[RMDB]
RNA sequence: GGGAACGACUCGAGUAGAGUCGAAAACUUGUGAAUCAUGAGCCAUCUUCUAUAUCUUUUCGCUUGCUUUCGGUAGGAAACACCUGUUUGGCUUGUCCCAACAGUGGUGAUGUCAUCUAAGCCAAUAUCCUCAUUAUCGUUAUCUGGGUCCUCAUUAUGUGUUACCAAUUUUCGAAUUGGUAACACAAAAAGAAACAACAACAACAAC
Reactivity to 2A3 in 0.01 (KOAc 150mM, MgCl2 10mM, bicine 150mM(pH8.5), 24C), signal-to-noise 6, nucleotides 027 to 156: c030u030u060g020u060g100a070a060u160c030a070u080g030a010g050c030c020a040u000c020u110u000c060u090a130u030a110u170c070u050u090u050u040c040g020c040u020u070g010c040u020u070u100c040g000g040u060a040g040g050a030a090a020c030a010c030c010u050g020u050u030u030g010g000c010u070u150g050u150c010c000c010a010a030c020a020g060u080g060g060u060g060a070u070g060u040c020a050u010c040u050a050a000g000c000c000a030a040u050a070u100c020c020u020c030a060u070u090a070u130c050g060u030u060a030u070c040u020g040g020g000u030c000c020u040c020a050u130u260a070
Reactivity to DMS in 0.01 (KOAc 150mM, MgCl2 10mM, bicine 150mM(pH8.5), 24C), signal-to-noise 3, nucleotides 027 to 156: c040u000u000g020u010g020a110a070u010c050a060u000g010a110g030c050c040a110u000c040u000u000c020u000a050u000a080u000c030u000u000u000u000c030g040c050u010u010g010c020u000u000u010c030g020g000u010a040g010g010a090a080a090c040a040c030c010u000g020u000u000u000g040g010c030u000u000g030u000c050c020c020a030a050c020a070g010u010g020g040u010g030a090u010g020u010c030a060u010c070u010a080a140g010c020c020a050a090u010a100u000c020c030u010c050a100u000u000a060u000c050g010u010u000a080u000c020u000g010g010g010u000c040c010u010c040a100u010u000a140

This 207-nucleotide RNA was probed chemically with 2A3 and DMS.
2A3 adducts were read by reverse transcription with SuperScript II with manganese.
For DMS, 10,697 sequencing reads were counted.
The 2A3 profile rests on 4,398 reads.
For DMS the reverse transcriptase was MarathonRT.
The RNA was probed in 150 mM KOAc, 10 mM MgCl2 and 150 mM bicine (pH 8.5) at 24 C.
2A3 is a SHAPE reagent: it acylates the 2'-hydroxyl of flexible nucleotides of all four kinds.